[RMDB]
RNA sequence: GGGAACGACUCGAGUAGAGUCGAAAAAGACAUCGGUGUAAUUUCAGACCUCCUAUGGAAUAAGGUUUUGUCUACAAUUUGGGCAUCUGUGCCUUCCAAUUAUAGUGAGGUUGGUCGCAUAGUGUCCGUGGAGAGAGUCUUUCGAGACUCUCUCCACAAAAGAAACAACAACAACAAC
Reactivity to DMS in 0.01 (KOAc 150mM, MgCl2 10mM, bicine 150mM(pH8.5), 24C), signal-to-noise 1, nucleotides 027 to 126: a000g010a010c060a040u010c070g020g030u010g040u000a050a050u000u000u000c080a040g000a040c020c000u000c000c030u000a110u000g000g000a220a040u030a060a080g030g020u000u000u000u010g010u000c030u010a140c270a100a100u010u000u010g010g030g020c000a000u010c210u030g030u010g000c010c060u000u000c020c050a060a050u030u010a060u000a070g000u010g000a050g000g000u000u000g000g010u000c150g010c030a010u000a080g010u000g040u010c040c050
Reactivity to 2A3 in 0.01 (KOAc 150mM, MgCl2 10mM, bicine 150mM(pH8.5), 24C), signal-to-noise 1, nucleotides 027 to 126: a010g040a030c030a050u140c150g090g020u040g010u080a190a260u100u260u160c060a020g060a090c010c020u030c000c020u040a040u040g070g100a070a090u140a070a210g000g000u020u070u110u070g020u010c000u030a020c090a160a170u150u150u300g020g000g000c010a020u000c060u120g160u090g090c010c050u030u000c000c000a120a010u050u110a010u030a110g180u210g100a000g000g000u000u000g030g030u090c050g000c030a000u020a050g020u030g010u000c040c030